This 207-nucleotide RNA was probed chemically with DMS and 2A3. 2A3 adducts were read by reverse transcription with SuperScript II with manganese. Source: RMDB library OK3TST, as collected in RNAgym. For DMS, 2,119 sequencing reads were counted. The 2A3 profile rests on 936 reads.

RNA sequence: GGGAACGACUCGAGUAGAGUCGAAAAAUUCGGUUAUCGGAUCUGCUCCUUUUUCUAUUAAAGUAUCGAUAUCGAUCUCGUCUAAGAAUUCAACUAUAUCGACAUAUUUCAUUUGUAUACACAUAACCAUUACUAACGUAGAAUGUAUAGGAAGAGAACCUAGCUGGUAUUUCGAUACCAGCUAGGUAAAAGAAACAACAACAACAAC
Reactivity to DMS in 0.01 (KOAc 150mM, MgCl2 10mM, bicine 150mM(pH8.5), 24C), signal-to-noise 1, nucleotides 027 to 156: a100u010u010c010g000g010u010u010a050u000c020g030g000a060u010c080u000g040c010u010c030c000u000u000u030u000u000c050u040a150u000u000a090a070a100g010u000a040u000c030g000a070u010a040u000c070g010a060u010c090u000c040g060u000c140u000a120a220g000a090a090u000u000c060a110a100c070u010a090u040a050u000c000g000a080c010a020u010a060u010u020u010c010a090u000u000u000g020u000a070u000a070c000a030c030a060u000a170a110c070c000a050u010u020a230c120u010a070a160c110g000u000a090g020a110a020u020g010u010a030u000a100g010g010a060a070g020a150g010a100
Reactivity to 2A3 in 0.01 (KOAc 150mM, MgCl2 10mM, bicine 150mM(pH8.5), 24C), signal-to-noise 2, nucleotides 027 to 156: a010u050u020c060g000g030u190u070a080u220c040g010g020a020u000c020u080g020c020u100c000c000u000u040u020u000u080c030u030a120u080u090a170a060a040g040u060a030u030c010g000a000u010a010u050c050g040a100u000c030u060c100g170u020c120u170a110a040g050a190a050u220u110c030a050a050c010u060a020u010a020u050c010g030a020c020a050u090a080u040u130u050c060a080u110u060u060g090u080a180u030a030c050a000c040a050u060a090a080c040c000a030u090u150a090c050u080a150a050c090g020u020a010g040a070a000u020g020u020a080u070a030g020g020a010a020g020a010g010a060